[RMDB]
RNA sequence: GGGAACGACUCGAGUAGAGUCGAAAAGCCAUCUGGGCGAACGCCAUGCCCCGAUGAGUAGGAGGGCGCGGCGGCCGCUGCAAAACCCGGGGCGCGAGCCUGGGCGGAGCGGCCGUCGGUGCAGAUCGCACGGAUUUCAUUUCGAUGAAAUCCGUGCAAAAGAAACAACAACAACAAC
Reactivity to 2A3 in 0.01 (KOAc 150mM, MgCl2 10mM, bicine 150mM(pH8.5), 24C), signal-to-noise 1, nucleotides 027 to 126: g080c010c010a010u000c000u040g000g000g000c010g100a090a040c120g090c060c000a080u190g000c000c000c000c000g010a000u040g080a000g060u100a060g030g140a090g020g090g020c000g000c000g030g000c000g000g000c000c000g000c000u040g060c010a030a020a010a140c000c000c020g060g010g040g030c100g020c090g130a040g060c000c020u030g000g000g000c020g010g040a000g000c000g010g000c000c000g000u010c000g000g000u020g010c010a020g000a140u130c060
Reactivity to DMS in 0.01 (KOAc 150mM, MgCl2 10mM, bicine 150mM(pH8.5), 24C), signal-to-noise 1, nucleotides 027 to 126: g010c020c000a000u010c000u020g010g000g030c000g000a120a070c180g000c120c130a050u000g000c030c000c010c030g000a090u000g000a060g000u010a060g020g020a300g000g000g000c000g010c020g000g020c000g000g040c000c030g090c000u000g000c090a080a030a290a150c000c000c010g000g000g000g000c000g020c300g000a120g010c000c000u000g000g000g000c190g000g070a000g000c000g000g010c000c000g030u000c000g020g050u070g000c030a020g000a110u080c110

Structure probing data (2A3 and DMS) for a 177-nucleotide construct. For 2A3, 1,072 sequencing reads were counted. The data come from the RNA Mapping Database (RMDB), library RFM100. The reactions ran in a buffer of 150 mM KOAc, 10 mM MgCl2 and 150 mM bicine (pH 8.5), at 24 C. For 2A3 the reverse transcriptase was SuperScript II with manganese.